[RMDB]
RNA sequence: GGGAACGACUCGAGUAGAGUCGAAAAAUCCGUCACGCAGUAACGCCGGUAUAUGACAUGAAUGGCUGCAUGCGAAAGGAUGGUGGAAUAUGGAAUAUUAUGCUAAUCUGUCGCGCGUACGGAAACCAUCCUCAUAACUCUUCUAAGGCGUCAAGCCAUUAAGCAUGGGUUUCGACCCAUGCUUAAUAAAAGAAACAACAACAACAAC
Reactivity to 2A3 in 0.01 (KOAc 150mM, MgCl2 10mM, bicine 150mM(pH8.5), 24C), signal-to-noise 4, nucleotides 027 to 156: a000u020c010c000g020u060c060a010c030g020c020a040g020u090a120a020c050g000c040c000g070g060u110a170u040a080u160g110a080c070a090u200g100a090a030u080g060g000c020u000g000c030a080u050g010c000g050a150a000a000g040g000a030u010g000g020u010g000g090a030a050u120a060u070g120g060a100a020u100a060u260u060a050u150g030c020u050a140a120u060c040u030g100u090c000g020c000g000c010g080u040a030c020g040g000a040a010a020c010c000a020u010c010c000u030c030a060u090a140a100c040u040c020u270u020c060u150a020a110g060g000c010g050u130c090a050a040g070c000c010
Reactivity to DMS in 0.01 (KOAc 150mM, MgCl2 10mM, bicine 150mM(pH8.5), 24C), signal-to-noise 3, nucleotides 027 to 156: a130u000c010c010g010u000c040a050c020g050c020a140g010u000a130a060c050g040c030c020g020g000u000a100u000a110u000g020a150c060a100u000g020a090a070u000g030g000c010u000g000c030a110u000g000c040g020a090a060a100g000g010a050u000g000g000u000g020g010a130a050u000a050u010g010g020a130a300u000a170u010u000a060u000g000c030u010a070a100u010c060u000g010u000c030g050c050g060c050g050u020a090c020g000g010a140a130a090c030c020a050u000c000c000u000c040a070u000a080a070c090u000c030u000u000c040u010a070a150g020g010c010g020u000c130a070a180g010c020c030